[RMDB]
RNA sequence: GGGAACGACUCGAGUAGAGUCGAAAAGUCGUGAUUUGGAACGCAUUUGUGAUUAUGCCAAUAACCUCACUAAGUUUGUCAAGCACUACCAGCACUUGGAUGUCAGCAUCUUUAGUAAGUUAGUUAACUUCACCACCAAUUUCGAUUGGUGGUGAAGAAAAGAAACAACAACAACAAC
Reactivity to DMS in 0.01 (KOAc 150mM, MgCl2 10mM, bicine 150mM(pH8.5), 24C), signal-to-noise 3, nucleotides 027 to 126: g020u000c080g010u000g010a150u000u000u000g010g010a120a070c090g040c060a170u020u000u010g020u000g010a050u000u010a060u000g000c080c110a020a050u010a060a110c050c060u000c080a050c120u020a040a100g010u010u000u010g010u010c070a070a110g000c070a060c050u000a100c030c010a050g000c080a040c130u000u010g010g010a090u010g000u010c070a100g020c040a030u000c010u000u000u000a050g010u000a020a060g030u010u000a100g000u000u000a090a160
Reactivity to 2A3 in 0.01 (KOAc 150mM, MgCl2 10mM, bicine 150mM(pH8.5), 24C), signal-to-noise 1, nucleotides 027 to 126: g120u110c070g020u020g060a200u000u070u120g030g040a040a000c060g020c040a060u000u050u190g080u030g080a100u100u190a020u180g020c000c010a000a050u040a080a030c000c010u030c020a010c040u060a080a000g020u000u000u100g060u010c020a030a030g020c010a060c020u040a100c000c010a040g190c040a000c060u060u030g020g020a010u020g060u060c010a010g020c010a020u030c000u090u060u040a050g040u070a090a010g000u040u100a010g110u080u140a000a090

An RNA of 177 nucleotides, treated with DMS and 2A3 and read out base by base. For DMS, 1,841 sequencing reads were counted. The reactions ran in a buffer of 150 mM KOAc, 10 mM MgCl2 and 150 mM bicine (pH 8.5), at 24 C. The 2A3 profile rests on 826 reads.